[RMDB]
RNA sequence: GGGAACGACUCGAGUAGAGUCGAAAAGAUAUGGAGCGAACUACACGUGAAGUAGGCGUUGAAACAUCAUUCUUCUCGGAAACGAGAAGAAUGAUGUGGAGCCUAUGGAGGCGUGCGCUCCUAAGUCCAUAUACCUGAGCUUCGGCUCAGGUAUAUGAAAAGAAACAACAACAACAAC
Reactivity to DMS in 0.01 (KOAc 150mM, MgCl2 10mM, bicine 150mM(pH8.5), 24C), signal-to-noise 4, nucleotides 027 to 126: g010a080u000a300u010g000g000a020g010c010g000a120a070c130u020a300c010a000c020g000u010g000a300a280g000u000a010g010g010c000g020u000u020g010a290a190a010c000a000u010c000a000u000u000c000u000u000c000u010c010g000g000a080a070a230c000g010a020g010a010a000g000a000a000u010g010a000u000g010u000g000g000a090g000c000c000u000a000u000g000g000a300g000g000c010g010u000g010c000g010c010u010c000c000u010a000a050g010u000c040
Reactivity to 2A3 in 0.01 (KOAc 150mM, MgCl2 10mM, bicine 150mM(pH8.5), 24C), signal-to-noise 2, nucleotides 027 to 126: g090a030u160a070u260g000g010a030g010c020g040a090a080c100u290a070c300a000c040g170u200g070a050a010g000u000a000g010g020c020g160u300u040g030a040a070a000c010a000u010c000a000u000u020c000u020u000c000u000c010g000g070a130a100a120c000g000a010g000a000a000g000a000a010u000g010a000u000g000u000g020g020a000g000c010c010u010a010u030g010g010a000g200g070c020g010u010g000c000g000c000u000c000c000u010a060a010g010u000c020
About this RNA: This 177-nucleotide RNA was probed chemically with DMS and 2A3. The 2A3 profile rests on 4,878 reads. The RNA was probed in 150 mM KOAc, 10 mM MgCl2 and 150 mM bicine (pH 8.5) at 24 C. For 2A3 the reverse transcriptase was SuperScript II with manganese. Values cover nucleotides 27 to 126.